RNA sequence: GGGAACGACUCGAGUAGAGUCGAAAAGGCUGCGUAUCACUCUAGGGUACGUGAUAGUCCGAUAUAAGAAGCACUGGUACAUGCCGGCAGGGACAGUUAAGAGAUGGCCGCAGUCUCGUGUCCCUGCAAAAGGAGUUCUCGUUCGCGAGAACUCCAAGCUACUGAUGUAGUUCGCUACAUCAGUAGCAAAAGAAACAACAACAACAAC
Reactivity to 2A3 in 0.01 (KOAc 150mM, MgCl2 10mM, bicine 150mM(pH8.5), 24C), signal-to-noise 4, nucleotides 027 to 156: g020g000c030u020g000c030g010u010a010u030c050a070c200u130c180u260a120g100g000g010u030a010c020g010u030g030a070u110a020g040u050c000c030g040a030u030a000u040a150a050g080a080a010g050c050a020c060u050g000g020u090a080c030a070u160g050c010c040g030g010c000a000g000g000g000a000c010a010g050u150u140a170a040g000a000g000a030u050g060g020c060c010g010c070a010g010u000c000u000c000g020u030g010u020c000c000c000u010g000c000a010a010a000a010g000g000a000g000u010u000c000u010c010g020u040u060c230g000c010g130a000g010a010a000c000u000c000c000a000a000
Reactivity to DMS in 0.01 (KOAc 150mM, MgCl2 10mM, bicine 150mM(pH8.5), 24C), signal-to-noise 1, nucleotides 027 to 156: g000g000c000u000g020c040g050u000a010u020c030a070c170u010c180u020a130g040g010g010u000a010c020g050u000g000a050u010a010g010u000c000c020g010a150u010a120u000a150a090g020a150a090g010c010a090c040u020g030g020u000a080c120a090u000g060c070c030g040g000c010a030g000g000g040a070c030a070g000u010u010a100a130g020a040g000a000u000g010g020c050c150g020c090a300g010u000c000u020c010g020u020g000u000c000c000c000u000g020c020a020a020a060a090g010g020a030g010u010u000c000u020c000g030u000u030c260g010c000g010a020g010a040a010c000u010c000c000a010a170

Chemical mapping of a 207-nucleotide RNA with 2A3 and DMS. The DMS profile rests on 2,700 reads. In probing experiments dimethyl sulfate is read out at A N1 and C N3, which are open when not base-paired. Source: RMDB library M2RFPK, as collected in RNAgym. 2A3 is a SHAPE reagent: it acylates the 2'-hydroxyl of flexible nucleotides of all four kinds. DMS adducts were read by reverse transcription with MarathonRT. The reactions ran in a buffer of 150 mM KOAc, 10 mM MgCl2 and 150 mM bicine (pH 8.5), at 24 C.